[RMDB]
RNA sequence: GGGAACGACUCGAGUAGAGUCGAAAACCCGCCCGUGGGGGAGAGUGUCCCGCGCUAUGGAUGCAGUUCAACGACUAAACGGUGAUGGGCUAGCGUAAUGAAUGCGUUCUGCACACUCUUACGCCGGCUUAAGAUAUAGUCUACUCCCACUCCGAAACAAGUUGAACACGUUCGCGUGUUCAACUUGAAAAGAAACAACAACAACAAC
Reactivity to 2A3 in 0.01 (KOAc 150mM, MgCl2 10mM, bicine 150mM(pH8.5), 24C), signal-to-noise 2, nucleotides 027 to 156: c000c010c010g030c020c080c040g020u010g000g000g000g100g010a070g010a030g010u070g000u040c000c040c020g070c030g000c080u180a110u210g030g000a020u010g000c060a010g010u050u150c070a120a010c150g060a010c010u050a130a110a010c100g050g040u110g070a180u190g010g030g000c030u010a010g000c020g000u010a010a010u070g030a210a260u030g000c000g050u220u100c160u250g010c000a000c000a000c000u000c000u000u000a010c000g000c000c020g000g000c000u020u070a040a010g020a000u090a030u050a170g020u000c010u010a050c000u020c000c020c000a030c000u010c110c000g080a130a080a080